[RMDB]
RNA sequence: GGGAACGACUCGAGUAGAGUCGAAAAUGGAUCAGUGUCGCUACUUCCAUGUGCCCAUUGGCAAUAUGCCGCCGGAUACUGUGCUUUUCGGAGCGGAUCUUUUCUUCGCUCGCUUGCUGCAGCGGCACUGACGAGUGCCGUUCGCGGCACUCGUCAGAAAAGAAACAACAACAACAAC
Reactivity to 2A3 in 0.01 (KOAc 150mM, MgCl2 10mM, bicine 150mM(pH8.5), 24C), signal-to-noise 1, nucleotides 027 to 126: u050g030g010a050u130c110a030g010u000g100u100c070g020c150u170a030c000u020u000c030c000a040u070g020u050g010c000c000c000a020u070u130g010g030c020a080a170u050a090u300g020c000c010g030c010c010g080g020a040u060a150c050u070g090u110g060c000u100u050u060u020c090g140g040a000g000c010g030g000a090u070c110u060u220u120u070c050u060u080c030g020c030u000c030g080c040u020u070g050c090u070g000c000a000g020c000g000g000c030a030
Reactivity to DMS in 0.01 (KOAc 150mM, MgCl2 10mM, bicine 150mM(pH8.5), 24C), signal-to-noise 1, nucleotides 027 to 126: u000g040g020a090u000c150a000g000u000g020u000c160g000c120u010a050c080u000u000c010c010a040u000g000u000g040c050c000c010a160u030u000g000g010c020a120a120u010a090u000g030c030c060g040c060c020g000g030a060u000a190c060u010g020u010g010c020u000u000u030u000c100g010g000a030g000c010g040g010a040u000c070u010u020u030u000c150u000u000c040g000c010u000c040g010c110u000u000g010c020u010g000c010a010g020c020g010g040c010a040